[RMDB]
RNA sequence: GGGAACGACUCGAGUAGAGUCGAAAAAUUUGCCAGUGAUAUGAUGACAUUGUCACAAAGAUCACAAGGGACACAGAGUUGACUUUUGCUCAAGGUGGAACGGCAAAGCUCUAUAGACAAGAUGAGAGAAGAGAACCGUUUUCGAACGGUUCUCUUCAAAAGAAACAACAACAACAAC
Reactivity to 2A3 in 0.01 (KOAc 150mM, MgCl2 10mM, bicine 150mM(pH8.5), 24C), signal-to-noise 3, nucleotides 027 to 126: a030u010u010u000g020c000c030a010g010u010g090a000u000a040u050g090a110u020g040a060c150a170u190u300g010u000c000a010c000a030a150a070g090a050u000c000a000c010a060a080g130g010g050a010c000a000c010a060g140a000g060u020u140g250a240c110u080u000u140u220g010c000u000c020a080a020g170g000u030g000g020a050a030c040g010g000c000a010a000a010g000c060u000c020u060a100u060a060g150a090c100a250a080g020a020u200g010a090g030a000
Reactivity to DMS in 0.01 (KOAc 150mM, MgCl2 10mM, bicine 150mM(pH8.5), 24C), signal-to-noise 2, nucleotides 027 to 126: a070u030u050u000g030c000c000a160g030u020g000a000u000a080u010g000a170u000g000a060c010a140u060u030g000u000c010a020c020a020a080a060g000a000u000c000a020c040a180a120g000g010g000a300c010a010c000a100g000a060g000u010u000g000a080c200u010u020u000u110g000c000u080c030a160a050g030g010u000g000g010a270a080c020g020g070c000a000a020a000g010c060u000c000u000a090u010a030g000a090c280a150a040g010a080u090g000a040g000a200